[RMDB]
RNA sequence: GGGAACGACUCGAGUAGAGUCGAAAAGAUAUGGACCAUCGGAGCUUUUGACGGGCUUUCGGAAACGAAAGAUCCGAUAAGCUCCCGUGGUCCUAAGUCAAAACGUGAAAUGUUCGCAUUUCACGAAGAUCGAUAACUACUUCGGUAGUUAUCGAUCAAAAGAAACAACAACAACAAC
Reactivity to 2A3 in 0.01 (KOAc 150mM, MgCl2 10mM, bicine 150mM(pH8.5), 24C), signal-to-noise 3, nucleotides 027 to 126: g030a000u040a000u050g000g000a010c000c000a000u000c020g010g000a010g000c030u150u300u300u300g230a090c030g000g000g010c000u000u010u000c010g010g010a050a020a010c000g020a000a050a040g070a250u110c020c010g020a040u080a250a050g000c000u000c000c000c010g000u000g000g000u000c010c000u000a000a000g000u000c000a020a030a060a090c020g010u010g000a000a010a010u040g020u080u100c300g010c140a000u000u000u000c010a010c010g010a050a030
Reactivity to DMS in 0.01 (KOAc 150mM, MgCl2 10mM, bicine 150mM(pH8.5), 24C), signal-to-noise 2, nucleotides 027 to 126: g000a010u000a250u000g000g000a010c000c000a020u000c300g010g000a000g000c010u000u000u000u020g000a130c110g040g000g010c010u000u010u010c000g020g000a040a020a090c000g020a010a020a000g000a040u010c000c000g030a060u000a030a050g010c000u000c010c000c040g080u000g000g010u000c000c000u000a010a030g000u000c010a080a130a080a180c000g020u000g020a010a000a010u000g000u000u010c230g040c000a020u000u000u000c000a000c000g000a040a050